[RMDB]
Overview: The data come from the RNA Mapping Database (RMDB), libraries RFM100 and RFMREP. Structure probing data (2A3 and DMS) for a 177-nucleotide construct. 2A3 adducts were read by reverse transcription with SuperScript II with manganese. Values cover nucleotides 27 to 126. Conditions: 150 mM KOAc, 10 mM MgCl2 and 150 mM bicine (pH 8.5), 24 C.
RNA sequence: GGGAACGACUCGAGUAGAGUCGAAAAAUCGCGUAGGUCGGCGUUCUGUUCGGGUGGAAGCACGGGUGAGAACUCGUGUGGACCGUUCAGUAACGAAAAUCCUGGUCAUAGUAGCAGCGUUAGUCGGUCUAAUUAGGAACUUCGGUUCCUAAUUAGAAAAAGAAACAACAACAACAAC
Reactivity to 2A3 in 0.01 (KOAc 150mM, MgCl2 10mM, bicine 150mM(pH8.5), 24C), signal-to-noise 8, nucleotides 027 to 126: a000u090c050g000c020g040u060a060g000g050u050c010g020g030c010g000u010u000c010u000g010u000u000c030g010g040g040u300g090g010a010a000g000c000a000c000g000g010g000u020g030a080g020a030a010c000u000c000g000u010g000u010g010g000a000c000c000g000u000u000c010a020g020u110a030a020c020g060a070a020a000a040u050c010c010u020g010g020u030c020a040u030a120g060u060a020g030c070a010g020c020g050u060u080a040g050u090c030g010g000
Reactivity to DMS in 0.01 (KOAc 150mM, MgCl2 10mM, bicine 150mM(pH8.5), 24C), signal-to-noise 7, nucleotides 027 to 126: a050u010c050g010c050g020u010a070g020g010u010c060g010g010c010g010u000u000c010u000g000u000u000c010g000g010g010u010g020g010a150a200g000c010a000c010g010g000g010u000g010a250g000a120a020c000u000c000g000u000g010u000g000g000a030c020c000g010u000u000c010a010g000u020a010a020c010g000a060a060a090a100u010c020c010u000g010g000u000c050a080u010a080g010u010a080g020c050a060g010c050g000u000u000a060g000u000c050g010g000